[RMDB]
The record gives the reactivity of an RNA of 177 nucleotides to 2A3 and DMS. Reactivities are rounded to 0.1 and cut off at 0 and 3. The DMS profile rests on 2,008 reads.

RNA sequence: GGGAACGACUCGAGUAGAGUCGAAAAGAUAUGGAGUAACCAGAGAUCCUGUUAGUAGUCGGAAACGAUAGUACUAACCUGAUCGACGAAGGUUACUCCUAAGUCAAAACGAGUCUUCGGACUCGAACGAUGUACUUCACUUCGGUGAAGUACAUCGAAAAGAAACAACAACAACAAC
Reactivity to 2A3 in 0.01 (KOAc 150mM, MgCl2 10mM, bicine 150mM(pH8.5), 24C), signal-to-noise 3, nucleotides 027 to 126: g040a020u060a070u130g010g000a030g000u000a000a010c010c010a000g010a010g000a030u010c010c010u000g000u020u000a000g010u000a010g020u000c010g040g060a050a060a080c030g010a020u040a120g280u010a030c000u000a010a000c010c010u020g000a000u020c030g300a300c040g070a130a050g000g000u010u000a000c000u000c000c000u000a010a010g010u000c010a000a030a090a070c020g010a010g010u000c010u080u110c280g130g010a000c000u000c000g000a040a000
Reactivity to DMS in 0.01 (KOAc 150mM, MgCl2 10mM, bicine 150mM(pH8.5), 24C), signal-to-noise 3, nucleotides 027 to 126: g020a030u000a300u000g000g000a010g030u000a000a010c000c000a050g000a200g000a020u000c010c060u000g000u000u000a000g020u000a020g000u000c010g010g000a120a100a140c000g020a020u000a140g030u000a010c010u010a010a010c010c050u010g010a000u000c000g010a140c210g000a080a100g000g000u000u000a000c000u000c000c000u000a000a060g020u000c040a110a060a040a180c040g000a010g000u000c000u010u010c190g000g000a020c000u000c010g000a040a110